[RMDB]
RNA sequence: GGGAACGACUCGAGUAGAGUCGAAAAUAUCGAGAAGGAGAUCUUGGCCCUGCUCCCACCCAACAUUUUCUAUGGCGAUGCCUAUGAAGAGUCAGUGUUUUCUGCAGCCAUUUCUGGGGCUGGCUCCUACUAAAUCAGCUUUCGAGCUGAUUUAGUAAAAAGAAACAACAACAACAAC
Reactivity to 2A3 in 0.01 (KOAc 150mM, MgCl2 10mM, bicine 150mM(pH8.5), 24C), signal-to-noise 2, nucleotides 027 to 126: u150a030u070c040g000a000g040a130a040g050g020a050g020a070u010c030u080u040g010g000c020c000c000u000g060c010u020c000c010c010a040c010c020c000a040a050c030a050u090u120u100u050c020u060a090u110g050g010c080g150a120u190g000c020c000u100a130u120g040a050a060g030a010g080u050c030a030g020u010g050u100u080u080u020c020u040g000c030a010g060c020c020a090u080u150u010c050u130g040g000g010g030c000u000g010g000c020u000c020c000
Reactivity to DMS in 0.01 (KOAc 150mM, MgCl2 10mM, bicine 150mM(pH8.5), 24C), signal-to-noise 4, nucleotides 027 to 126: u010a080u010c050g000a100g020a140a080g010g000a060g010a170u010c070u010u010g000g010c010c000c020u010g030c070u000c020c010c020a200c090c010c030a060a060c090a080u000u000u000u000c030u010a090u010g000g000c010g000a130u000g010c050c040u000a090u020g000a060a080g000a050g010u000c050a080g000u010g000u010u000u000u000c060u000g010c050a060g000c040c020a080u000u010u010c110u000g010g010g000g010c040u000g010g000c020u000c020c060
This 177-nucleotide RNA was probed chemically with 2A3 and DMS. 2A3 adducts were read by reverse transcription with SuperScript II with manganese. The data come from the RNA Mapping Database (RMDB), library OK2TRN. The RNA was probed in 150 mM KOAc, 10 mM MgCl2 and 150 mM bicine (pH 8.5) at 24 C.